[RMDB]
RNA sequence: GGGAACGACUCGAGUAGAGUCGAAAAGAAGCUGUCUUCGGACAGCUUCGGUUUAUUUCGUGUAAUCGUCGAGUCGUUCCCAUGAUUACAUGAUAUAAUUUGCUGUCUGCGGAUUCGUCCGCAGAAAACGUGUAAGAUUCUUCGGAAUCUUACACGUAAAAGAAACAACAACAACAAC
Reactivity to 2A3 in 0.01 (KOAc 150mM, MgCl2 10mM, bicine 150mM(pH8.5), 24C), signal-to-noise 2, nucleotides 027 to 126: g020a000a000g000c000u000g010u010c000u010u050c260g100g020a000c000a000g000c000u000u010c020g010g000u020u070u030a100u000u040u030c020g000u070g050u120a080a210u050c080g060u010c040g030a010g000u000c000g000u020u000c000c010c000a000u000g000a000u020u010a010c000a000u110g040a000u000a000u010a190a180u100u100u180g110c060u090g030u090c000u000g000c010g030g010a000u000u040c160g060u010c020c000g000c020a000g000a000a000a000
Reactivity to DMS in 0.01 (KOAc 150mM, MgCl2 10mM, bicine 150mM(pH8.5), 24C), signal-to-noise 3, nucleotides 027 to 126: g000a010a010g020c000u000g000u000c000u000u010c200g020g000a010c000a000g000c000u000u000c000g000g010u010u010u000a070u000u000u010c010g010u000g010u010a120a100u000c020g000u010c030g010a050g020u000c000g020u000u000c000c010c010a010u010g000a060u000u010a060c120a070u000g000a090u000a100u010a060a070u000u000u000g010c100u010g010u010c000u010g000c000g010g010a030u000u000c210g010u000c000c000g010c010a000g000a020a010a080
This 177-nucleotide RNA was probed chemically with 2A3 and DMS. The DMS profile rests on 3,386 reads. Conditions: 150 mM KOAc, 10 mM MgCl2 and 150 mM bicine (pH 8.5), 24 C. The 2A3 profile rests on 1,633 reads.